[RMDB]
Chemical mapping of a 207-nucleotide RNA with 2A3. For 2A3 the reverse transcriptase was SuperScript II with manganese. The reactions ran in a buffer of 150 mM KOAc, 10 mM MgCl2 and 150 mM bicine (pH 8.5), at 24 C. Values cover nucleotides 27 to 156.
RNA sequence: GGGAACGACUCGAGUAGAGUCGAAAAGUACAGUUCGCUGUACAGGCUGACCUUUGUGGCUUUCCUUAGGGAGAAUUGGCGUACAUCCCAUUGGGAUGUGAUCCAAUUCUUUGAUCUAAGAGAAGCCACUCUGGUACUUAUGACGAUUCGUCGUCAACCCUUUCGGUGAUUUCGAUCACCGAAAGGGAAAAGAAACAACAACAACAAC
Reactivity to 2A3 in 0.01 (KOAc 150mM, MgCl2 10mM, bicine 150mM(pH8.5), 24C), signal-to-noise 3, nucleotides 027 to 156: g020u000a000c010a000g000u030u120c160g080c120u000g010u010a020c000a030g130g100c120u140g050a030c010c000u000u000u030g010u020g000g010c040u110u170u100c010c000u010u020a010g060g000g000a020g000a000a000u000u000g010g030c040g040u090a000c000a000u010c010c030c050a300u210u300g000g000g010a000u000g020u030g030a050u020c000c000a000a000u000u010c010u020u050u030g030a030u000c000u000a000a010g150a010g000a070a000g000c020c000a000c000u020c020u000g010g010u040a120c080u180u280a150u200g010a000c010g040a080u060u080c240g070u090c010g020u060c120a050a130